Record summary
Structure probing data (DMS and 2A3) for a 177-nucleotide construct. 2A3 adducts were read by reverse transcription with SuperScript II with manganese.
[RMDB]
RNA sequence: GGGAACGACUCGAGUAGAGUCGAAAAACUCACCGCUACGGCGGUGAGAGCCCUCCCCUCUCACACCCCCGGGAGCGGUGACCGGGGGGCGGUCGGGGAGGGCACAACGAUCCUUACGAGGAUCGAACACAUUCGUUUUAUUCGUAAAACGAAUGUGAAAAGAAACAACAACAACAAC
Reactivity to DMS in 0.01 (KOAc 150mM, MgCl2 10mM, bicine 150mM(pH8.5), 24C), signal-to-noise 3, nucleotides 027 to 126: a140c000u000c000a010c000c010g020c020u000a110c190g040g010c000g020g010u010g000a000g000a030g010c000c010c000u000c000c000c000c000u010c030u000c040a110c070a240c020c000c000c000c010g010g000g000a130g030c070g000g000u010g000a060c000c000g000g000g000g010g010g020c090g010g000u010c110g000g000g000g010a010g000g010g010c000a000c060a060a150c010g000a010u010c000c000u000u020a130c130g020a020g010g010a000u000c000g010a090a170
Reactivity to 2A3 in 0.01 (KOAc 150mM, MgCl2 10mM, bicine 150mM(pH8.5), 24C), signal-to-noise 7, nucleotides 027 to 126: a000c000u000c000a000c010c000g010c010u020a050c280g120g000c000g000g000u000g000a000g000a000g000c000c000c000u000c000c000c000c000u010c000u040c000a080c010a060c030c000c000c000c000g020g010g010a150g070c080g050g080u080g140a040c000c000g000g000g000g000g000g000c030g020g000u080c070g000g000g000g000a000g000g000g000c000a000c000a000a000c000g000a000u010c010c000u040u050a060c270g080a020g000g000a000u000c000g030a080a010
Reactivities are given for positions 27 through 126. The RNA was probed in 150 mM KOAc, 10 mM MgCl2 and 150 mM bicine (pH 8.5) at 24 C. DMS adducts were read by reverse transcription with MarathonRT.